[RMDB]
Conditions: 150 mM KOAc, 10 mM MgCl2 and 150 mM bicine (pH 8.5), 24 C. Structure probing data (DMS and 2A3) for a 177-nucleotide construct. The data come from the RNA Mapping Database (RMDB), library VIROID. For 2A3 the reverse transcriptase was SuperScript II with manganese. DMS adducts were read by reverse transcription with MarathonRT. The 2A3 profile rests on 1,393 reads.

RNA sequence: GGGAACGACUCGAGUAGAGUCGAAAAGACCCGAAGAGGAAAGAAGGACGCGAGACGCAAACCCGUGAGUGGAAACCCGCUUUAUUCACUGGGGUCGACAACUUUGGGGAGAAAAGGGAGGAUCGGCGGAUUAUAUACAGUUCGCUGUAUAUAAUCCAAAAGAAACAACAACAACAAC
Reactivity to DMS in 0.01 (KOAc 150mM, MgCl2 10mM, bicine 150mM(pH8.5), 24C), signal-to-noise 3, nucleotides 027 to 126: g010a180c020c010c010g010a090a060g000a060g010g000a050a060a100g000a100a080g000g010a050c140g000c070g010a080g000a060c080g020c090a050a110a140c030c010c020g000u000g000a050g060u000g000g020a040a070a080c100c020c040g020c100u000u000u010a020u010u010c060a040c020u010g010g020g000g020u000c030g000a100c100a080a050c070u000u000u010g010g010g010g030a080g000a020a050a060a070g000g000g010a070g010g000a100u000c070g010g020c250
Reactivity to 2A3 in 0.01 (KOAc 150mM, MgCl2 10mM, bicine 150mM(pH8.5), 24C), signal-to-noise 2, nucleotides 027 to 126: g050a020c010c020c020g010a070a020g040a000g030g040a060a010a130g030a030a020g040g010a000c010g020c020g040a070g010a070c050g020c080a040a040a130c000c000c000g020u060g000a010g010u050g000g040a040a080a030c000c000c000g040c100u090u120u110a120u150u140c080a040c070u130g000g010g000g090u050c010g020a050c010a110a000c070u160u160u120g030g000g030g030a090g030a010a110a010a010g040g020g010a050g030g030a000u000c000g000g040c050